[RMDB]
RNA sequence: GGGAACGACUCGAGUAGAGUCGAAAAGCAGUUGACUUCGGUCAACUGCAAAUAAAGCUCAAGACGUGCACUGGGAGGAACGUCUUGAGCAACCCAAUAAAAAAACAUGUAAGUUCGCUUACAUGAACUCUAGUUACGUGUUCGCACGUAACUAGAGAAAAGAAACAACAACAACAAC
Reactivity to DMS in 0.01 (KOAc 150mM, MgCl2 10mM, bicine 150mM(pH8.5), 24C), signal-to-noise 1, nucleotides 027 to 126: g030c000a000g010u000u000g010a010c010u000u010c210g030g020u000c000a010a000c000u030g020c000a000a030a050u020a100a130a080g010c000u000c000a010a010g010a000c000g000u000g030c140a140c050u020g000g040g020a100g000g020a190a010c000g020u000c000u000u000g000a020g000c000a020a020c000c000c000a120a070u060a000a000a030a060a100a040a100c030a000u000g010u000a000a030g000u000u000c300g010c010u000u000a030c000a000u000g000a020a040
Reactivity to 2A3 in 0.01 (KOAc 150mM, MgCl2 10mM, bicine 150mM(pH8.5), 24C), signal-to-noise 3, nucleotides 027 to 126: g000c000a010g000u000u000g000a010c010u050u100c220g090g010u000c000a000a000c000u000g020c000a000a000a000u000a000a000a000g000c000u000c000a000a000g000a010c000g000u030g020c110a030c210u110g070g090g060a130g040g020a050a000c000g000u010c000u000u000g000a000g000c000a000a000c010c000c010a010a020u170a020a050a010a000a000a000a010c010a010u010g000u020a000a020g010u020u130c240g000c110u000u000a000c000a000u010g020a030a020